[RMDB]
RNA sequence: GGGAACGACUCGAGUAGAGUCGAAAAUCUAAUUUCAUAUGAACUUGACAUACUUUGUGAACUCGGGAAGCCUGUUGAGUUUGUAACAGCUCUAAUGAUUAGAACAAAGGCUCACAAAUGGGAAAAUAACAAUGUAGUUUCCUAUCAAAGUGUGAGACGACUAAAUUACUUUCGAGUAAUUUAGUCGAAAAGAAACAACAACAACAAC
Reactivity to DMS in 0.01 (KOAc 150mM, MgCl2 10mM, bicine 150mM(pH8.5), 24C), signal-to-noise 1, nucleotides 027 to 156: u000c030u010a090a180u000u000u010c020a180u020a200u000g000a040a030c010u000u000g000a050c020a000u000a030c040u010u010u000g130u000g000a180a140c160u030c100g000g010g000a050a030g010c070c000u010g000u000u000g000a060g050u000u010u040g030u000a110a040c030a120g040c000u010c080u000a060a130u000g010a230u000u000a000g000a050a070c010a020a030a130g000g000c010u010c000a030c000a040a110a040u000g000g000g000a090a000a030a080u000a080a190c070a100a210u010g060u000a060g000u000u000u000c000c000u000a040u000c100a120a060a160g020u010g000u000g000a070g000a170
Reactivity to 2A3 in 0.01 (KOAc 150mM, MgCl2 10mM, bicine 150mM(pH8.5), 24C), signal-to-noise 2, nucleotides 027 to 156: u010c000u040a050a040u070u200u110c060a040u110a110u240g030a020a030c020u090u080g040a020c020a050u060a070c020u040u100u030g140u040g060a140a080c050u030c100g100g010g000a020a020g070c030c030u000g030u040u040g010a030g000u000u040u140g050u040a080a050c030a060g030c080u000c040u220a220a110u100g060a030u030u050a010g020a030a000c010a000a130a040g010g010c000u050c010a020c020a000a100a090u050g000g000g060a000a010a010a030u150a170a010c100a060a100u220g030u060a040g020u030u030u030c000c020u020a040u080c070a040a170a090g020u010g000u010g020a000g010a010